[RMDB]
RNA sequence: GGGAACGACUCGAGUAGAGUCGAAAAUUGCGCCUCCGAUUCGCCGUCGGCAUUUCCCCAGCAGCCAUGACCUACCAGGCUGCGGUGCGGCUCGCCGCCCAGGUCAUCCCUCAUCGGGCGCGUCCUGGAUAGGGCUAUACUUUCGAGUAUAGCCCAAGCGUUAUUAUAGUUUCGACUAUAAUAACGCAAAAGAAACAACAACAACAAC
Reactivity to DMS in 0.01 (KOAc 150mM, MgCl2 10mM, bicine 150mM(pH8.5), 24C), signal-to-noise 2, nucleotides 027 to 156: u000u020g020c030g010c010c010u030c020c040g020a160u000u000c060g010c080c080g000u000c020g020g020c090a150u010u010u000c020c000c020c020a110g020c020a040g010c010c010a100u000g010a110c080c020u000a080c070c050a140g010g020c010u000g010c000g010g010u000g030c020g020g000c060u000c030g010c000c030g000c050c010c020a040g030g000u000c050a090u000c020c000c020u000c120a140u000c050g020g000g020c030g040c040g000u000c010c000u010g000g000a210u000a070g010g050g060c000u000a010u000a000c010u000u010u000c240g020a050g000u010a010u000a020g020c020c010c000a000a030
Reactivity to 2A3 in 0.01 (KOAc 150mM, MgCl2 10mM, bicine 150mM(pH8.5), 24C), signal-to-noise 4, nucleotides 027 to 156: u110u090g020c030g000c000c040u070c030c020g030a090u100u100c080g020c070c040g050u070c040g030g000c060a040u060u070u080c010c000c000c000a020g000c010a010g000c010c020a170u130g030a150c000c040u090a140c100c030a020g010g000c000u010g010c010g000g010u050g010c040g030g020c050u050c080g070c000c000g010c000c000c000a000g010g010u040c030a130u060c020c000c010u100c020a170u110c040g010g020g000c030g010c050g020u030c000c000u020g040g010a070u090a200g020g000g000c000u000a000u000a000c000u040u030u110c140g020a010g000u010a020u010a000g020c030c000c000a010a000